[RMDB]
RNA sequence: GGGAACGACUCGAGUAGAGUCGAAAACGCUAGUUAGAAGUAUCAGUCGGCCUUUAACACAAGGUUAUGAGACUGCCCUCAUGAUUGGGCGUCAUGAGUGCCUAUACGUCCAACCUCUUGAAAAGUAACUGAUUACUGCGUUCGCGCAGUAAUCAGUAAAAGAAACAACAACAACAAC
Reactivity to 2A3 in 0.01 (KOAc 150mM, MgCl2 10mM, bicine 150mM(pH8.5), 24C), signal-to-noise 4, nucleotides 027 to 126: c010g030c090u030a060g030u130u040a050g050a260a000g060u080a080u130c010a000g030u030c000g050g010c010c000u040u080u110a280a030c060a020c020a100a010g060g020u090u060a080u260g120a110g000a010c010u030g010c020c000c000u010c000a020u050g000a090u050u120g030g030g000c040g020u000c020a030u050g030a020g030u100g030c000c000u100a110u030a120c010g010u000c010c000a000a020c000c050u040c030u040u060g160a090a020a000a000g140u080a050
Reactivity to DMS in 0.01 (KOAc 150mM, MgCl2 10mM, bicine 150mM(pH8.5), 24C), signal-to-noise 2, nucleotides 027 to 126: c170g010c080u030a040g000u010u000a090g000a140a010g000u020a050u010c070a010g010u000c000g030g020c020c030u000u010u040a040a120c260a090c270a090a050g000g010u000u000a030u000g030a210g000a010c000u020g000c030c060c000u000c000a000u030g000a170u010u000g030g030g000c080g000u000c020a000u050g000a000g000u000g020c100c200u000a080u020a020c030g010u000c020c060a030a110c090c110u000c060u000u060g000a120a030a050a010g030u040a110
The record gives the reactivity of an RNA of 177 nucleotides to 2A3 and DMS. The 2A3 profile rests on 2,361 reads. For DMS the reverse transcriptase was MarathonRT. The reactions ran in a buffer of 150 mM KOAc, 10 mM MgCl2 and 150 mM bicine (pH 8.5), at 24 C. The DMS profile rests on 1,798 reads.